Source: RMDB library OK2TRN, as collected in RNAgym. This 177-nucleotide RNA was probed chemically with 2A3 and DMS. Reactivities are given for positions 27 through 126. The reactions ran in a buffer of 150 mM KOAc, 10 mM MgCl2 and 150 mM bicine (pH 8.5), at 24 C. 2A3 adducts were read by reverse transcription with SuperScript II with manganese.
RNA sequence: GGGAACGACUCGAGUAGAGUCGAAAAUCUGUCCACACUGCAAGCUCAGUUCCCUGGAUCCUGCGGUCUGAAGUACCGCAACCUGGACACGAAGGCUGUGCGCGGAGUUCGCUCCAACGAGGGCAGACACAAUCCAGCAAUUCGUUGCUGGAUUGUGAAAAGAAACAACAACAACAAC
Reactivity to 2A3 in 0.01 (KOAc 150mM, MgCl2 10mM, bicine 150mM(pH8.5), 24C), signal-to-noise 3, nucleotides 027 to 126: u000c000u000g010u020c010c000a050c000a010c090u130g000c030a020a030g030c020u040c240a010g020u080u080c010c000c050u030g040g040a120u150c040c060u060g000c000g010g010u000c010u250g300a250a040g050u170a020c000c000g030c000a000a000c000c000u020g020g000a020c020a000c130g040a040a030g040g000c020u050g080u080g150c020g040c090g040g000a010g010u050u080c150g010c080u000c010c010a080a070c070g040a070g000g000g020c010a000g020a000
Reactivity to DMS in 0.01 (KOAc 150mM, MgCl2 10mM, bicine 150mM(pH8.5), 24C), signal-to-noise 4, nucleotides 027 to 126: u000c010u000g020u000c010c000a170c120a140c120u010g010c020a140a040g010c010u000c010a300g000u000u000c050c000c050u000g010g000a070u000c220c160u000g010c010g010g010u010c020u000g030a160a140g030u010a030c010c000g010c000a030a020c020c010u020g000g000a090c120a040c020g000a120a160g000g010c020u000g010u020g010c040g010c200g000g000a050g010u010u000c160g010c000u000c000c030a080a080c150g010a140g000g010g000c010a010g010a080